[RMDB]
RNA sequence: GGGAACGACUCGAGUAGAGUCGAAAAGCUCAAUGAAAUGGCGAACAUUGGAGGUCAGGAUUACAGUAUUUGCUUCUUCCUGUUUGGCUGUUUGGUAGCAUCAGCUGCCCUGCUGAAGCUCAGAAGAGUCUAACACUUGCUUCGGCAAGUGUUAGACAAAAGAAACAACAACAACAAC
Reactivity to 2A3 in 0.01 (KOAc 150mM, MgCl2 10mM, bicine 150mM(pH8.5), 24C), signal-to-noise 3, nucleotides 027 to 126: g030c030u030c060a050a170u200g030a060a050a030u100g020g000c000g000a010a020c030a100u010u100g040g000a000g000g030u050c040a000g000g050a040u080u110a100c050a090g170u190a140u040u140u100g060c040u030u040c000u030u020c000c000u000g050u040u020u060g160g000c040u030g040u120u080u070g070g000u030a010g000c010a090u050c050a040g000c010u040g090c000c000c020u030g000c030u010g010a060a020g000c020u020c050a140g010a160a000g010a020
Reactivity to DMS in 0.01 (KOAc 150mM, MgCl2 10mM, bicine 150mM(pH8.5), 24C), signal-to-noise 1, nucleotides 027 to 126: g060c060u000c060a160a130u120g040a030a050a030u000g000g000c000g000a110a140c050a120u080u000g030g020a010g000g000u020c090a010g030g000a080u020u070a070c180a100g000u000a100u040u020u010g010c130u020u000c050u000u000c030c030u000g070u020u000u030g010g040c020u020g000u000u020u000g010g000u000a010g080c020a090u000c060a010g000c030u000g010c010c100c000u000g000c000u010g000a000a050g000c060u020c070a210g000a060a070g000a100
An RNA of 177 nucleotides, treated with 2A3 and DMS and read out base by base. For DMS the reverse transcriptase was MarathonRT.